[RMDB]
RNA sequence: GGGAACGACUCGAGUAGAGUCGAAAACCAUCGACUGUCACCAGAUGCUGCAUCACCUGAUCCCUGAUGGCUCAACGGUAUCCGGCGGUACAACUGAAUACUUGUAGCUGCCUUUUGAGCGGGUUGGAAAAUCGGAGGUUGUUCGCAACCUCCGAAAGAAUCAUCUAUCGUUCGCGAUAGAUGAUUCAAAAGAAACAACAACAACAAC
Reactivity to DMS in 0.01 (KOAc 150mM, MgCl2 10mM, bicine 150mM(pH8.5), 24C), signal-to-noise 2, nucleotides 027 to 156: c040c010a130u000c060g010a120c000u020g000u000c050a060c030c010a050g000a080u010g020c030u000g000c090a150u000c060a080c050c020u010g020a130u000c020c020c030u000g010a120u000g000g030c030u000c040a120a050c040g000g000u000a020u010c020c000g040g060c000g070g020u010a070c090a090a080c030u000g000a100a070u000a050c020u000u000g020u000a060g010c020u010g000c020c010u020u000u010u010g000a070g050c050g030g000g000u000u000g000g000a060a050a100a080u010c020g000g000a010g020g050u000u000g010u000u010c270g010c020a050a030c000c000u010c010c000g000a010a020a040
Reactivity to 2A3 in 0.01 (KOAc 150mM, MgCl2 10mM, bicine 150mM(pH8.5), 24C), signal-to-noise 4, nucleotides 027 to 156: c000c010a020u080c060g100a040c050u080g010u070c020a020c080c020a030g020a100u040g040c030u040g010c020a020u030c000a040c030c010u070g030a070u030c000c000c010u040g030a060u110g080g000c000u020c030a050a040c070g100g000u070a090u070c040c050g030g020c010g030g020u050a020c020a060a030c040u180g110a140a070u120a140c030u040u090g020u020a040g100c020u020g000c000c000u050u050u030u070g040a030g000c030g000g020g040u030u040g070g040a050a070a030a100u020c000g000g000a000g010g000u000u000g010u040u040c110g000c090a000a000c000c000u000c000c000g010a000a000a010